An RNA of 207 nucleotides, treated with 2A3 and read out base by base. The RNA was probed in 150 mM KOAc, 10 mM MgCl2 and 150 mM bicine (pH 8.5) at 24 C. For 2A3, 924 sequencing reads were counted.
[RMDB]
RNA sequence: GGGAACGACUCGAGUAGAGUCGAAAACGCUGGGCCUCAUACAGCGCUGUGUGCAAGCUGAAGCGCGCACGGUGAUGACCACACAAACGCUGUGAGGCCUGUGCUGAAGCGCGCACGGCAACCGAAAGGUGCGAAAAGUAGCAAGUUCGCUUGCUACGGUUUGGAAUCCGUUCGCGGAUUCCAAACCAAAAGAAACAACAACAACAAC
Reactivity to 2A3 in 0.01 (KOAc 150mM, MgCl2 10mM, bicine 150mM(pH8.5), 24C), signal-to-noise 1, nucleotides 027 to 156: c050g010c010u090g000g000g020c000c000u000c010a040u040a300c000a030g000c000g010c010u040g000u000g000u000g020c080a190a300g000c000u010g030a220a040g010c020g000c000g010c010a010c080g030g000u100g000a280u220g030a060c100c000a000c010a000c000a010a080a050c030g000c010u000g000u010g040a000g010g000c010c000u000g000u000g020c000u050g010a150a010g000c000g000c000g010c040a000c010g050g000c020a060a050c000c000g000a090a030a030g000g000u050g000c040g110a090a090a000a020g010u010a000g010c000a010a010g020u050u080c300g030c170u000u000g010c000u000a000c030
Background: It was measured as part of the RMDB library RNAMAK.